[RMDB]
RNA sequence: GGGAACGACUCGAGUAGAGUCGAAAAGCUCCCCUCGGACUUCCUCCAGGAGGGUUCACAUCCCCAACCCGCGGGCCGGCUACUCUUCUUUCCCUUCUCUCGUCUUCCUCGGUCAACCUCCUGAGUUUAACAUUUACGUUCGCGUAAAUGAAAAGAAACAACAACAACAAC
Reactivity to DMS in 0.01 (KOAc 150mM, MgCl2 10mM, bicine 150mM(pH8.5), 24C), signal-to-noise 9, nucleotides 027 to 129: g000c060u030c030c020c000c030u000c040g030g020a100c080u040u020c040c030u030c050c040a070g010g030a090g050g000g000u010u000c080a110c130a150u010c000c010c020c030a110a130c030c030c020g000c040g000g000g000c030c020g030g020c070u030a080c080u010c000u020u020c050u000u000u000c010c000c000u030u000c020u030c020u000c040g000u000c020u000u000c040c000u000c030g000g000u030c040a050a150c060c040u020c000c000u000g010a110g010u020u010u020a060a140
Reactivity to 2A3 in 0.01 (KOAc 150mM, MgCl2 10mM, bicine 150mM(pH8.5), 24C), signal-to-noise 9, nucleotides 027 to 129: g020c020u040c000c000c000c000u020c040g030g000a040c030u070u020c030c020u030c020c000a030g040g020a030g030g030g000u100u090c090a070c010a140u090c000c000c010c000a040a080c010c000c010g040c020g000g000g000c010c010g020g000c000u060a060c020u020c000u070u050c000u030u050u050c010c010c000u070u020c020u000c000u010c010g060u010c020u110u030c030c000u020c010g010g020u040c030a040a050c020c010u030c000c010u020g010a040g050u020u050u040a060a020